[RMDB]
RNA sequence: GGGAACGACUCGAGUAGAGUCGAAAAGAUAUGGAUCGGCAAGCUUUUGACGCUCCUGUCGGAAACGACGGGAGCGAUAAGCUUGCGAUCCUAAGUCAAAAGACGUAUAACUUCGGUUAUACGUCAACGUUUUAAGUCAGUUCGCUGACUUAAAACGAAAAGAAACAACAACAACAAC
Reactivity to DMS in 0.01 (KOAc 150mM, MgCl2 10mM, bicine 150mM(pH8.5), 24C), signal-to-noise 2, nucleotides 027 to 126: g000a010u000a190u000g000g000a000u010c000g050g020c000a000a000g010c000u000u000u020u000g030a210c060g010c000u000c000c000u000g000u020c000g020g010a040a040a070c000g020a010c000g000g000g000a000g010c010g000a000u000a010a020g010c000u000u010g000c000g000a000u000c000c000u010a000a090g000u010c020a120a090a150a140g010a010c000g010u000a000u000a010a000c000u000u010c220g040g000u000u000a000u000a010c000g000u000c000a020a050
Reactivity to 2A3 in 0.01 (KOAc 150mM, MgCl2 10mM, bicine 150mM(pH8.5), 24C), signal-to-noise 2, nucleotides 027 to 126: g010a000u050a020u090g010g020a020u000c060g260g140c080a010a000g010c020u160u250u300u300g240a070c000g010c000u000c000c010u000g000u020c000g000g020a050a020a010c000g000a000c000g000g020g000a000g010c000g000a000u020a000a000g000c020u000u000g000c000g000a000u000c000c000u020a020a010g010u010c010a000a090a000a160g010a010c010g020u000a000u000a010a010c010u060u010c280g090g000u000u010a000u000a010c000g000u010c000a000a010